RNA sequence: GGGAACGACUCGAGUAGAGUCGAAAAGGAGGCUGACUGUGGAUGUGAUCGACCAAGCCAACGAACGGGCCGAGAACAUGGUCCAGGCCGCCCUGGCCCAGCGGACAAACACCCGCCUGGCGCCCAGCGCCCUCUGGUGCGAGGACUGCGGAGAGCAGUCGCGCAUCUACUUCGGUAGAUGCGCGACAAAAGAAACAACAACAACAAC
Reactivity to 2A3 in 0.01 (KOAc 150mM, MgCl2 10mM, bicine 150mM(pH8.5), 24C), signal-to-noise 2, nucleotides 027 to 156: g060g000a040g000g040c050u050g020a050c030u030g040u080g120g090a090u050g100u090g110a120u060c030g030a030c010c030a060a020g050c020c020a080a030c130g050a070a030c070g000g030g000c050c000g030a020g010a070a040c020a050u090g010g010u000c010c010a010g040g040c020c020g020c040c020c000u010g010g000c000c000c000a000g010c000g000g010a010c040a020a180a000c040a050c010c010c000g010c040c000u020g030g000c050g030c100c070c000a010g030c000g030c000c000c000u000c020u040g090g000u110g020c030g000a000g040g040a020c020u030g020c070g000g030a060g000a000g040c040a000
Reactivity to DMS in 0.01 (KOAc 150mM, MgCl2 10mM, bicine 150mM(pH8.5), 24C), signal-to-noise 1, nucleotides 027 to 156: g010g000a100g030g020c060u000g010a050c050u030g000u010g030g020a140u050g060u020g050a080u000c060g070a040c010c000a080a090g000c010c000a070a190c020g020a050a060c040g040g010g040c000c030g030a080g030a200a080c040a050u010g030g020u000c020c010a090g070g000c030c000g020c020c000c000u020g020g040c010c050c120a050g020c000g020g000a200c020a070a040a090c020a300c140c000c000g030c030c020u010g060g020c080g000c050c050c010a070g000c090g000c050c000c030u010c030u000g020g010u000g000c020g010a090g060g000a030c010u010g020c000g050g010a090g020a070g040c070a110
Structure probing data (2A3 and DMS) for a 207-nucleotide construct. The 2A3 profile rests on 1,350 reads. Source: RMDB library OK3TST, as collected in RNAgym. The DMS profile rests on 1,593 reads.